[RMDB]
RNA sequence: GGGAACGACUCGAGUAGAGUCGAAAAGAUAUGGAAGAUCCCUCUCGCGAUAAGAUGAUGUCGGAAACGACAUACAUCUUUUGACGCGACGGAUCUUCCUAAGUCAAAACUGCGGUUCGCCGCAGAAUCAUUGAAAAAACUUCGGUUUUUUCAAUGAAAAAGAAACAACAACAACAAC
Reactivity to 2A3 in 0.01 (KOAc 150mM, MgCl2 10mM, bicine 150mM(pH8.5), 24C), signal-to-noise 2, nucleotides 027 to 126: g020a030u070a040u120g000g000a000a000g000a000u010c000c000c010u000c000u000c020g000c020g090a080u030a190a020g000a010u010g000a010u020g000u000c010g020g010a090a030a050c020g010a000c020a000u090a180c000a000u000c000u010u010u010u050g050a050c040g000c010g000a040c230g000g010a000u000c000u000u000c000c000u010a020a010g000u000c000a010a030a130a200c010u010g000c030g000g090u080u120c300g030c110c000g000c000a000g000a010a030
Reactivity to DMS in 0.01 (KOAc 150mM, MgCl2 10mM, bicine 150mM(pH8.5), 24C), signal-to-noise 5, nucleotides 027 to 126: g000a040u000a300u020g000g000a020a010g010a000u000c000c010c120u010c130u000c000g030c000g010a150u000a010a020g010a000u000g020a050u000g010u000c000g000g000a120a110a230c010g010a010c000a000u000a150c000a000u000c000u000u000u000u000g020a190c120g010c010g030a020c220g000g000a010u000c000u010u000c000c000u000a000a080g010u020c030a100a080a140a190c010u010g000c010g030g010u000u020c300g020c000c000g010c010a010g000a110a110